[RMDB]
RNA sequence: GGGAACGACUCGAGUAGAGUCGAAAAGAUAUGGAUUCAUGAAGUGCGAAGAACGACUCGUCGGAAACGACGAGGUCGGGAGCACCAUGAAUCCUAAGUCAAACUGCUGCUCUUCGGAGCAGCAGAACAUGGAAACGAUCUUCGGAUCGUUUCCAUGAAAAGAAACAACAACAACAAC
Reactivity to DMS in 0.01 (KOAc 150mM, MgCl2 10mM, bicine 150mM(pH8.5), 24C), signal-to-noise 1, nucleotides 027 to 126: g000a020u000a050u030g000g040a010u000u000c000a010u000g000a190a100g090u010g030c000g010a110a200g000a140a190c000g040a190c010u010c000g000u020c000g000g000a020a010a030c000g000a010c000g020a010g000g010u000c010g150g000g020a100g020c000a020c010c000a020u010g000a010a000u000c000c000u010a000a030g000u010c000a070a090a270c000u000g000c000u000g000c000u010c000u000u050c240g000g010a010g000c000a010g000c010a000g000a040a150
Reactivity to 2A3 in 0.01 (KOAc 150mM, MgCl2 10mM, bicine 150mM(pH8.5), 24C), signal-to-noise 1, nucleotides 027 to 126: g000a000u030a020u080g000g030a000u010u010c000a000u020g150a300a240g020u010g020c080g150a300a180g020a300a160c000g010a010c000u020c020g000u000c030g000g070a010a010a000c000g000a010c040g000a050g020g000u030c020g000g060g000a180g000c010a000c000c010a000u000g000a000a000u020c000c000u030a010a000g020u000c030a030a030a110c000u010g040c000u010g010c020u030c050u060u080c300g180g000a000g000c000a000g000c010a000g000a000a010

Chemical mapping of a 177-nucleotide RNA with DMS and 2A3. Values cover nucleotides 27 to 126. Values are in units of 0.01, from 0 to 300, in steps of 10. The reactions ran in a buffer of 150 mM KOAc, 10 mM MgCl2 and 150 mM bicine (pH 8.5), at 24 C.